[RMDB]
RNA sequence: GGGAACGACUCGAGUAGAGUCGAAAACAGUAUGCCUUCGGGCAUACUGAAACCAGAGGGUAUCUGGCCGACGCUCCCAUGCGUGCCGGGAAUCCCAUCCCAAAACGGAUGUCUUCGGACAUCCGAACAACUAUCUAUUCUUCGGAAUAGAUAGUUGAAAAGAAACAACAACAACAAC
Reactivity to DMS in 0.01 (KOAc 150mM, MgCl2 10mM, bicine 150mM(pH8.5), 24C), signal-to-noise 9, nucleotides 027 to 126: c000a000g000u000a000u000g010c000c000u000u000c190g030g000g020c000a010u000a000c000u000g000a030a060a120c110c120a100g000a110g010g010g010u000a060u010c010u000g000g000c050c110g000a050c040g010c020u010c190c170c140a080u010g010c010g010u000g000c030c020g000g010g000a140a120u010c000c000c010a180u000c010c010c010a060a060a100a180c020g010g000a010u000g000u000c000u000u010c170g010g000a010c000a000u000c000c000g010a030a070
Reactivity to 2A3 in 0.01 (KOAc 150mM, MgCl2 10mM, bicine 150mM(pH8.5), 24C), signal-to-noise 9, nucleotides 027 to 126: c000a000g000u000a000u010g000c010c010u050u110c300g090g000g000c000a000u000a000c000u000g000a040a000a010c050c010a040g100a110g140g030g010u060a060u130c010u020g030g000c030c070g080a040c010g010c010u170c050c070c030a030u200g000c000g010u010g000c000c010g010g000g010a010a050u070c000c000c010a060u030c010c010c000a030a080a010a020c010g000g000a000u000g000u000c000u040u080c220g080g000a000c000a000u000c000c000g000a010a010